This 177-nucleotide RNA was probed chemically with DMS and 2A3. Values cover nucleotides 27 to 126. The reactions ran in a buffer of 150 mM KOAc, 10 mM MgCl2 and 150 mM bicine (pH 8.5), at 24 C. 2A3 adducts were read by reverse transcription with SuperScript II with manganese. 2A3 is a SHAPE reagent: it acylates the 2'-hydroxyl of flexible nucleotides of all four kinds.

RNA sequence: GGGAACGACUCGAGUAGAGUCGAAAAGAUAUGGAAAUCAUCCCCAUACGUCAGCUAGCUCACAAAUGGUCGGAAACGACCAACAAAGAGCUUGGACCUGACGUAUGGGGAGUGAUUUCCUAAGUCAUCUUAUCAUGAACUUCGGUUCAUGAUAAGAAAAAGAAACAACAACAACAAC
Reactivity to DMS in 0.01 (KOAc 150mM, MgCl2 10mM, bicine 150mM(pH8.5), 24C), signal-to-noise 4, nucleotides 027 to 126: g010a040u010a300u010g000g000a010a000a020u000c000a130u010c000c000c000c000a000u000a000c000g020u000c000a000g020c060u000a030g010c000u000c000a070c210a170a150a090u000g010g000u000c000g020g000a120a150a230c010g000a000c000c010a020a010c110a130a180a110g000a010g010c000u010u020g040g020a150c300c010u010g000a020c000g010u000a010u000g000g000g000g000a000g010u000g000a010u000u010u000c000c010u010a020a080g020u000c030a160
Reactivity to 2A3 in 0.01 (KOAc 150mM, MgCl2 10mM, bicine 150mM(pH8.5), 24C), signal-to-noise 1, nucleotides 027 to 126: g000a040u120a050u230g000g020a000a000a010u000c000a030u020c000c000c000c000a010u010a010c010g000u010c000a010g000c040u030a020g020c010u000c000a090c070a040a140a150u060g020g010u020c010g090g000a080a100a120c010g020a020c040c010a000a000c030a000a050a020g000a010g000c000u010u070g020g070a110c040c020u010g000a000c000g000u000a000u000g000g010g000g000a000g000u000g000a000u000u010u000c000c000u000a080a000g020u000c020a040